Structure probing data (DMS and 2A3) for a 207-nucleotide construct. It was measured as part of the RMDB library M2RFOK. For 2A3, 2,599 sequencing reads were counted. 2A3 adducts were read by reverse transcription with SuperScript II with manganese. The DMS profile rests on 2,011 reads. For DMS the reverse transcriptase was MarathonRT.

[RMDB]
RNA sequence: GGGAACGACUCGAGUAGAGUCGAAAACCUCACUACAUUUUACUGUUCCUAAAGAAUUUGUGACAGGUACAGUAAACCGUAUUGCAAGGUUUAUCAGUUCCUAUAAACAGGUAAAUAACAAUAUAUGAAAAGCAAAGACUGUUCGCAGUCUUUGCAAUCGAAUACACAGGUUCGCCUGUGUAUUCGAAAAAGAAACAACAACAACAAC
Reactivity to DMS in 0.01 (KOAc 150mM, MgCl2 10mM, bicine 150mM(pH8.5), 24C), signal-to-noise 1, nucleotides 027 to 156: c020c000u010c000a050c090u020a030c020a080u000u000u000u000a050c010u000g030u000u000c000c000u000a100a210a170g040a170a130u030u000u000g070u000g020a160c130a100g030g060u000a020c020a050g000u000a000a010a010c160c080g020u020a050u000u000g020c020a140a090g000g010u020u000u000a060u010c010a130g000u000u000c020c000u000a090u000a060a070a120c030a030g010g040u000a070a090a140u000a100a070c030a050a110u010a160u000a090u030g000a060a060a120a300g060c000a020a010a020g020a020c000u000g020u000u000c160g040c010a010g010u000c010u000u000u010g020c010a030a010
Reactivity to 2A3 in 0.01 (KOAc 150mM, MgCl2 10mM, bicine 150mM(pH8.5), 24C), signal-to-noise 4, nucleotides 027 to 156: c000c000u020c000a000c010u010a010c000a050u020u020u000u000a000c000u000g010u050u060c010c010u090a090a130a070g140a190a300u230u240u290g100u070g030a060c060a100g000g020u000a000c000a000g000u000a000a000a000c010c030g010u000a000u010u040g030c070a070a030g030g010u000u010u020a110u090c020a030g000u000u030c000c000u040a060u190a110a100a020c060a010g090g100u090a070a090a080u150a160a030c040a120a050u120a020u090a050u240g090a090a100a020a000g000c000a000a000a000g000a000c000u000g040u040u050c190g000c100a000g000u000c000u000u000u000g000c000a000a000